[RMDB]
RNA sequence: GGGAACGACUCGAGUAGAGUCGAAAAGAUAUGGAGGAAUCAGCAACAGCCAUCCGUCGGAAACGACGGUAUGGACAUGCUGUGGCCUCCUAAGUCAAAGCAGGGAAGUGUUCGCACUUCCCUGCAACUCACCAGUAUUGUUCGCAAUACUGGUGAGAAAAGAAACAACAACAACAAC
Reactivity to DMS in 0.01 (KOAc 150mM, MgCl2 10mM, bicine 150mM(pH8.5), 24C), signal-to-noise 4, nucleotides 027 to 126: g000a020u000a080u030g000g000a020g000g000a300a080u000c000a000g010c010a080a110c190a160g010c000c010a010u000c000c000g010u010c000g010g000a020a020a050c000g020a000c000g000g000u010a000u000g000g010a040c140a080u010g000c010u000g010u000g020g010c000c000u000c000c000u000a010a060g000u000c020a090a090a130g010c000a010g000g000g000a000a010g030u000g010u000u010c250g010c000a010c000u000u000c000c000c000u010g000c000a000a030
Reactivity to 2A3 in 0.01 (KOAc 150mM, MgCl2 10mM, bicine 150mM(pH8.5), 24C), signal-to-noise 3, nucleotides 027 to 126: g000a000u020a000u050g000g000a000g000g040a010a060u070c010a010g000c050a050a250c080a300g020c010c000a010u020c000c000g030u000c000g000g020a020a000a000c000g010a000c000g000g030u060a000u010g000g000a000c010a080u200g010c000u000g000u040g020g040c000c010u020c010c000u010a000a000g010u000c020a180a070a000g000c010a000g000g000g020a010a000g000u010g050u130u230c250g050c100a000c010u000u020c000c000c000u000g000c000a000a000